[RMDB]
RNA sequence: GGGAACGACUCGAGUAGAGUCGAAAAGGCGCAACCAAGCCAGCUCCUUGCGCAGCAGGUUCUGCCGCUUGGCUUCGGCCGCGGCGGUCAGCCGGUCCCGCUCGACGCGCUGCAGCACGUACGCCGCACCAGUAGACUUAUUCGUAAGUCUACUGGUAAAAGAAACAACAACAACAAC
Reactivity to 2A3 in 0.01 (KOAc 150mM, MgCl2 10mM, bicine 150mM(pH8.5), 24C), signal-to-noise 7, nucleotides 027 to 126: g020g000c020g000c070a020a030c030c000a040a010g030c010c000a010g010c020u040c010c020u100u120g020c130g010c050a080g010c010a010g030g010u070u020c010u040g030c030c030g010c030u080u170g010g000c010u050u040c110g080g000c010c000g000c000g010g000c000g000g010u050c030a010g000c010c010g040g020u050c020c010c000g010c020u040c060g060a050c030g010c000g000c090u050g020c000a030g010c010a020c090g060u120a030c050g020c020c010g020c010
Reactivity to DMS in 0.01 (KOAc 150mM, MgCl2 10mM, bicine 150mM(pH8.5), 24C), signal-to-noise 9, nucleotides 027 to 126: g010g010c020g020c110a090a080c060c050a090a090g010c030c030a070g000c040u000c040c030u000u010g020c060g020c130a090g010c050a070g010g000u000u000c030u000g010c060c070g010c020u010u010g030g010c030u000u010c130g020g010c000c020g010c020g000g020c000g010g010u010c100a080g000c030c030g000g010u000c030c060c020g010c050u000c080g010a060c050g010c060g010c020u000g010c050a070g000c020a070c080g010u000a080c060g000c020c030g020c160